[RMDB]
RNA sequence: GGGAACGACUCGAGUAGAGUCGAAAAGAUAUGGAGACGCAGGCCGAUAAGCGUGGGUCGGAAACGACCCGACGCUUUUGACGGCUGAGGUCUCCUAAGUCAAAAUCAGCUUGUUCGCAAGCUGAAAGAUAUAAGGUCAGUUCGCUGACCUUAUAUCAAAAGAAACAACAACAACAAC
Reactivity to 2A3 in 0.01 (KOAc 150mM, MgCl2 10mM, bicine 150mM(pH8.5), 24C), signal-to-noise 4, nucleotides 027 to 126: g000a010u050a020u100g010g000a000g000a010c030g010c100a020g050g090c010c100g180a180u140a300a000g010c030g000u000g000g000g000u000c000g000g000a060a030a000c000g000a000c000c010c000g000a000c000g000c000u040u020u030u040g070a030c030g000g010c000u000g000a000g000g000u000c000u010c000c000u000a000a000g000u010c020a020a000a000a300u020c000a000g000c000u050u040g070u130u210c300g030c170a000a000g000c000u000g000a000a010a000
Reactivity to DMS in 0.01 (KOAc 150mM, MgCl2 10mM, bicine 150mM(pH8.5), 24C), signal-to-noise 7, nucleotides 027 to 126: g000a030u000a300u010g000g000a020g010a020c000g000c040a300g000g010c000c000g020a160u010a010a020g010c000g040u000g000g020g020u000c000g020g000a080a060a150c000g000a010c010c000c000g010a000c000g010c000u000u000u010u010g000a170c120g010g010c000u000g000a250g000g010u000c000u000c000c000u010a000a080g000u000c020a110a080a130a170u000c010a020g000c010u000u000g000u000u020c240g020c010a020a010g010c000u000g000a010a060a070